About this RNA:
An RNA of 177 nucleotides, treated with DMS and 2A3 and read out base by base. The RNA was probed in 150 mM KOAc, 10 mM MgCl2 and 150 mM bicine (pH 8.5) at 24 C. Values cover nucleotides 27 to 126.
[RMDB]
RNA sequence: GGGAACGACUCGAGUAGAGUCGAAAAGUAUGAUCCUUCGGGAUCAUACAAAUAAACUCGCCUAUAGCCAGGCGAGAACCAAAGCGGCUAAUGCAAUGGAAAAAAUCGGAUACUUCGGUAUCCGAAACGGCUAAUAAUUGUUCGCAAUUAUUAGCCGAAAAGAAACAACAACAACAAC
Reactivity to DMS in 0.01 (KOAc 150mM, MgCl2 10mM, bicine 150mM(pH8.5), 24C), signal-to-noise 2, nucleotides 027 to 126: g010u010a000u000g000a010u000c000c000u000u000c150g060g040g010a010u000c000a010u000a000c000a070a080a140u000a060a180a240c030u000c000g010c000c000u000a150u000a120g010c070c080a050g010g010c000g000a000g000a090a130c020c030a030a070a300g000c080g000g000c120u000a050a050u010g020c080a080a150u010g000g020a000a030a040a060a080a070u020c010g000g000a030u000a000c000u000u010c160g000g030u000a010u000c010c000g020a000a020a080
Reactivity to 2A3 in 0.01 (KOAc 150mM, MgCl2 10mM, bicine 150mM(pH8.5), 24C), signal-to-noise 2, nucleotides 027 to 126: g000u000a000u020g010a000u000c000c010u010u050c200g120g000g000a000u000c000a020u010a010c000a020a010a000u090a010a030a010c010u000c010g000c010c010u130a100u100a160g070c050c050a010g010g000c000g000a010g040a000a000c010c010a010a000a030g110c070g060g000c050u170a000a050u160g040c050a020a100u060g030g000a060a150a020a010a000a090u030c010g020g000a000u000a010c000u030u090c280g080g000u000a000u010c000c000g000a000a000a000